Structure probing data (DMS and 2A3) for a 177-nucleotide construct.
The RNA was probed in 150 mM KOAc, 10 mM MgCl2 and 150 mM bicine (pH 8.5) at 24 C.
DMS adducts were read by reverse transcription with MarathonRT.
As a SHAPE reagent, 2A3 marks flexible, mostly unpaired nucleotides at the ribose 2'-OH.
[RMDB]
RNA sequence: GGGAACGACUCGAGUAGAGUCGAAAAUAGAAGGUCAAUGGGGAUGAGCUGUCGAGGUUUCACAUCCCGUAUGUAGCCGGUAACAGUGGCAUCGAACAUAAUGCAAUCCAUCAAUGCACAGUGUGGAAUGUAGUUGCAUGUUCGCAUGCAACUACAUAAAAGAAACAACAACAACAAC
Reactivity to DMS in 0.01 (KOAc 150mM, MgCl2 10mM, bicine 150mM(pH8.5), 24C), signal-to-noise 4, nucleotides 027 to 126: u020a040g020a140a100g000g010u030c050a100a080u010g010g020g010g010a030u000g000a210g020c020u000g010u020c120g010a220g000g020u000u010u020c090a060c070a060u020c030c020c060g010u030a040u000g010u030a080g030c030c010g000g010u030a090a060c130a040g020u010g010g000c020a040u000c000g000a050a150c040a030u010a060a030u010g000c030a030a140u020c010c010a030u030c050a060a060u020g000c100a050c160a080g010u020g020u000g010g010a070
Reactivity to 2A3 in 0.01 (KOAc 150mM, MgCl2 10mM, bicine 150mM(pH8.5), 24C), signal-to-noise 4, nucleotides 027 to 126: u190a030g060a090a060g040g020u100c090a090a040u120g010g000g000g040a030u010g010a000g060c010u020g060u140c050g040a030g060g040u000u080u170c050a040c000a080u070c040c020c020g000u040a040u090g030u030a020g040c030c040g000g000u050a060a050c030a070g050u070g130g000c000a010u010c030g050a060a000c050a050u190a190a040u200g020c040a020a040u010c030c010a020u060c060a080a050u060g060c050a030c010a070g080u040g030u030g150g030a100